[RMDB]
An RNA of 177 nucleotides, treated with 2A3 and DMS and read out base by base. 2A3 adducts were read by reverse transcription with SuperScript II with manganese. Conditions: 150 mM KOAc, 10 mM MgCl2 and 150 mM bicine (pH 8.5), 24 C. The data come from the RNA Mapping Database (RMDB), library OK1LIB.
RNA sequence: GGGAACGACUCGAGUAGAGUCGAAAACGGCCCACCAGCCUGCUCAUCACGUAAUGGACUACCAAGGCGACGACGGGUAGCUGGCAUGAGAGAAUAAACGGCCAGAGUGGAACUGGGAUAGGGCCCAAAUAAUAUUUUUAUUCGUAAAAAUAUUAUUAAAAGAAACAACAACAACAAC
Reactivity to 2A3 in 0.01 (KOAc 150mM, MgCl2 10mM, bicine 150mM(pH8.5), 24C), signal-to-noise 2, nucleotides 027 to 126: c010g040g000c020c000c000a000c000c020a020g010c000c000u000g000c000u000c000a040u020c010a020c080g040u040a080a100u180g010g040a020c010u030a030c000c000a070a050g130g010c040g050a030c040g000a010c050g030g000g000u000a000g000c020u010g030g000c000a050u080g050a040g000a010g030a110a080u130a100a100a040c030g030g010c010c000a010g000a000g000u010g020g000a070a100c000u000g000g020g040a190u130a120g070g020g000c040c000c000a000
Reactivity to DMS in 0.01 (KOAc 150mM, MgCl2 10mM, bicine 150mM(pH8.5), 24C), signal-to-noise 3, nucleotides 027 to 126: c210g010g020c000c000c000a070c040c020a000g010c090c000u010g050c010u000c030a070u000c050a090c080g000u030a070a070u020g010g000a170c070u030a040c000c010a050a150g020g010c040g010a080c110g010a030c100g010g000g000u000a010g010c050u010g010g010c070a060u010g010a100g020a110g010a190a140u050a080a110a140c110g000g010c000c030a050g010a100g010u000g000g010a060a140c010u000g000g010g000a150u030a070g010g010g020c000c010c100a020